[RMDB]
RNA sequence: GGGAACGACUCGAGUAGAGUCGAAAAGGUCCUCACUAAGGCAGCUCUGUUGAGAGUUGCCAUGGUGGGGGGGGUUGACCCUGCGGGGGUCCCCAGGCCGUCAACUUCCGGUGCCAGACGUUGGUACGCUAGUAGAAAACUUCGGUUUUCUACUAGCAAAAGAAACAACAACAACAAC
Reactivity to 2A3 in 0.01 (KOAc 150mM, MgCl2 10mM, bicine 150mM(pH8.5), 24C), signal-to-noise 1, nucleotides 027 to 126: g030g020u050c020c000u000c000a000c000u040a080a110g000g000c010a000g000c010u010c010u040g250u300u300g300a050g000a000g030u020u000g000c000c000a010u000g000g010u000g000g010g000g020g000g000g000g000u010u100g010a010c000c010c000u020g030c200g090g090g000g020g040u100c090c000c020c000a010g070g020c060c070g010u020c010a040a020c030u120u010c020c000g020g020u020g000c000c020a050g020a230c160g140u130u070g000g010u010a010c070
Reactivity to DMS in 0.01 (KOAc 150mM, MgCl2 10mM, bicine 150mM(pH8.5), 24C), signal-to-noise 1, nucleotides 027 to 126: g000g000u010c010c000u000c020a010c000u010a060a050g010g010c000a000g000c000u000c000u000g020u030u010g020a030g020a020g020u000u000g020c000c000a010u000g010g010u000g000g030g010g040g000g000g000g000u000u000g000a030c000c010c000u000g030c260g050g000g030g030g010u010c020c010c010c000a070g000g000c120c150g010u010c030a020a030c030u000u000c010c030g020g010u010g000c000c000a030g000a120c160g010u010u010g010g020u000a020c090